[RMDB]
RNA sequence: GGGAACGACUCGAGUAGAGUCGAAAAGGAGAUCGAAGAUGACCGACGUCAGCACGGUCCGGAUGUAGGUCCGCAUGCAUCCCAGUUGACGAAACUUCACGAUUUCCAAAGCGGACAAGAAGUCAAACGUAGGACUACGUUUCGACGUAGUCCUACGAAAAGAAACAACAACAACAAC
Reactivity to DMS in 0.01 (KOAc 150mM, MgCl2 10mM, bicine 150mM(pH8.5), 24C), signal-to-noise 3, nucleotides 027 to 126: g000g000a020g010a000u000c000g040a120a070g020a210u030g000a120c120c130g010a300c060g000u000c070a010g000c090a210c190g020g000u070c120c220g020g000a020u000g000u020a070g000g000u010c000c000g000c000a090u010g010c000a000u000c000c000c300a070g000u010u010g000a020c040g000a050a100a120c000u000u030c040a170c010g000a000u000u000u020c000c010a030a040a150g010c000g000g000a000c020a080a020g030a070a060g000u020c080a000a120a190
Reactivity to 2A3 in 0.01 (KOAc 150mM, MgCl2 10mM, bicine 150mM(pH8.5), 24C), signal-to-noise 3, nucleotides 027 to 126: g000g010a020g000a000u030c050g010a120a070g070a120u180g110a100c080c050g050a060c010g060u040c020a010g020c070a020c110g110g070u110c080c050g010g020a000u000g000u000a000g000g050u000c000c000g000c010a000u000g000c010a000u000c000c010c010a020g010u000u030g020a030c050g030a160a100a060c030u060u050c060a010c100g010a000u000u020u000c010c010a040a050a000g000c000g000g000a010c000a020a050g170a090a010g090u170c090a040a040a090

Chemical mapping of a 177-nucleotide RNA with DMS and 2A3. The RNA was probed in 150 mM KOAc, 10 mM MgCl2 and 150 mM bicine (pH 8.5) at 24 C. For DMS the reverse transcriptase was MarathonRT. The DMS profile rests on 3,177 reads.